[RMDB]
RNA sequence: GGGAACGACUCGAGUAGAGUCGAAAAGAAGCUGUCUUCGGACAGCUUCGGUUUAUAUCGUGUAAUCGUCGAGUCGUUCCCAUGAUUACAUGAAAUAAUUUGCUGUCUGCGGAUUCGUCCGCAGAAAGGUAUCAUUAGACUUCGGUCUAAUGAUACCAAAAGAAACAACAACAACAAC
Reactivity to 2A3 in 0.01 (KOAc 150mM, MgCl2 10mM, bicine 150mM(pH8.5), 24C), signal-to-noise 3, nucleotides 027 to 126: g000a020a000g000c000u000g000u000c000u030u060c190g080g000a000c000a000g000c000u000u000c010g000g000u000u070u020a170u000a010u050c020g000u030g080u180a100a140u070c080g060u000c020g060a000g000u010c010g000u000u000c000c000c000a010u000g000a000u000u030a040c020a020u140g090a010a040a020u140a050a100u150u130u160g130c070u080g010u060c000u000g000c000g000g000a010u010u050c180g050u020c030c000g000c000a000g000a000a000a000
Reactivity to DMS in 0.01 (KOAc 150mM, MgCl2 10mM, bicine 150mM(pH8.5), 24C), signal-to-noise 3, nucleotides 027 to 126: g010a010a000g010c000u000g000u000c000u000u020c210g030g010a010c010a000g000c010u000u000c000g010g010u000u000u010a080u020a130u010c020g000u010g000u010a090a060u010c020g020u000c060g000a020g010u010c010g020u000u000c000c000c000a010u000g000a060u000u000a060c100a070u010g000a040a120a080u000a050a060u000u010u010g020c100u020g000u000c010u000g000c000g000g000a040u000u000c250g020u000c000c010g000c000a000g000a010a070a090

Chemical mapping of a 177-nucleotide RNA with 2A3 and DMS. The data come from the RNA Mapping Database (RMDB), library M2PK50. The reactions ran in a buffer of 150 mM KOAc, 10 mM MgCl2 and 150 mM bicine (pH 8.5), at 24 C. For 2A3 the reverse transcriptase was SuperScript II with manganese. The 2A3 profile rests on 3,745 reads.